This 177-nucleotide RNA was probed chemically with DMS and 2A3. For 2A3 the reverse transcriptase was SuperScript II with manganese.
RNA sequence: GGGAACGACUCGAGUAGAGUCGAAAACCGCACUUCUUCGGAAGUGCGGAAAUACCGAGAUUGUACCUCGGUAGAAGUACAUAACCCUUGCAAACAAGGGAAAAAGCGUGAGCUUCGGCUCACGCAACACGGUGAUAACGUUCGCGUUAUCACCGUGAAAAGAAACAACAACAACAAC
Reactivity to DMS in 0.01 (KOAc 150mM, MgCl2 10mM, bicine 150mM(pH8.5), 24C), signal-to-noise 2, nucleotides 027 to 126: c000c020g000c000a000c000u000u000c010u000u010c180g030g000a000a000g000u000g030c000g000g000a010a010a040u000a080c010c020g020a030g000a120u000u020g010u030a300c040c000u000c010g000g000u000a000g000a050a080g020u000a100c140a060u030a090a120c010c000c000u000u000g010c300a120a090a100c020a000a010g010g020g020a030a030a080a130a090g010c000g000u000g000a000g010c000u000u030c210g020g000c000u000c000a000c010g000c000a020a040
Reactivity to 2A3 in 0.01 (KOAc 150mM, MgCl2 10mM, bicine 150mM(pH8.5), 24C), signal-to-noise 1, nucleotides 027 to 126: c020c000g000c000a030c000u000u010c000u020u000c070g130g010a000a000g000u000g000c000g000g020a000a030a000u000a000c000c010g000a000g020a040u140u240g080u190a120c000c000u010c000g030g010u020a010g020a130a000g080u100a050c050a110u110a090a050c010c020c000u000u040g040c120a090a190a230c000a000a170g030g000g080a000a080a050a000a030g020c000g000u000g000a000g020c000u020u050c180g060g000c000u000c010a000c010g020c000a000a010
The RNA was probed in 150 mM KOAc, 10 mM MgCl2 and 150 mM bicine (pH 8.5) at 24 C.
Reactivities are given for positions 27 through 126.
It was measured as part of the RMDB library M2PK50.
The DMS profile rests on 1,492 reads.